[RMDB]
RNA sequence: GGGAACGACUCGAGUAGAGUCGAAAAGAAAGUAGCGACAUACCGCGAAAGUAUGCUUACUAACCGGUAAGGAAAGGCUAAGAUAGGCCGAACUAUCAACGGGAGCUACGAAAAGAACCGUAGAAAAGGGAAUUCAUCACUUCGGUGAUGAAUUCCCAAAAGAAACAACAACAACAAC
Reactivity to DMS in 0.01 (KOAc 150mM, MgCl2 10mM, bicine 150mM(pH8.5), 24C), signal-to-noise 1, nucleotides 027 to 126: g000a080a070a300g000u000a020g000c000g000a210c000a030u060a000c000c000g020c190g000a120a120a170g000u000a000u000g070c180u000u000a000c300u000a020a150c060c000g000g000u000a090a260g070g000a000a020a210g000g000c000u000a090a220g000a020u000a050g000g000c020c000g000a090a140c000u000a070u070c140a140a120c030g020g000g000a070g000c000u000a000c000g020a280a020a100a160g000a000a030c030c030g000u000a000g000a000a200a000a090

The record gives the reactivity of an RNA of 177 nucleotides to DMS.
The reactions ran in a buffer of 150 mM KOAc, 10 mM MgCl2 and 150 mM bicine (pH 8.5), at 24 C.
Values cover nucleotides 27 to 126.
The DMS profile rests on 641 reads.